Chemical mapping of a 177-nucleotide RNA with 2A3 and DMS. The data come from the RNA Mapping Database (RMDB), library OK2TST. For 2A3 the reverse transcriptase was SuperScript II with manganese. The reactions ran in a buffer of 150 mM KOAc, 10 mM MgCl2 and 150 mM bicine (pH 8.5), at 24 C.
RNA sequence: GGGAACGACUCGAGUAGAGUCGAAAACGUUCACUCGCCAAGCGCAUCGAUGCGCAGCUUGCCAUCGUUGACAAGCGCCGCGAACGCCCCGGUGAAUCGGAAGUCAUGAACGUCAUCGGCGAUGUUAAUCAGGUGAUAGGUUCGCCUAUCACCUGAUAAAAGAAACAACAACAACAAC
Reactivity to 2A3 in 0.01 (KOAc 150mM, MgCl2 10mM, bicine 150mM(pH8.5), 24C), signal-to-noise 2, nucleotides 027 to 126: c010g020u010u050c000a010c070u050c020g060c000c010a060a000g020c020g000c060a010u030c050g060a020u050g010c040g010c190a050g060c110u100u260g000c010c000a040u050c040g070u050u060g050a070c050a150a060g000c010g000c040c010g000c000g000a020a010c070g060c000c000c000c030g040g000u080g050a060a070u190c040g060g060a070a030g070u080c030a090u130g040a030a020c030g010u000c020a030u020c010g060g000c050g050a060u080g100u110u150a130
Reactivity to DMS in 0.01 (KOAc 150mM, MgCl2 10mM, bicine 150mM(pH8.5), 24C), signal-to-noise 3, nucleotides 027 to 126: c050g010u000u000c020a100c080u000c020g020c010c060a190a130g020c060g020c010a080u010c010g010a050u010g020c200g040c020a090g010c210u000u000g010c000c010a020u000c080g010u000u000g000a090c080a130a100g020c010g040c090c090g030c000g000a040a090c030g010c070c030c010c020g000g030u000g010a050a080u010c030g000g010a110a190g010u000c170a070u000g010a060a080c040g010u000c040a030u010c030g000g000c100g010a090u000g010u000u010a090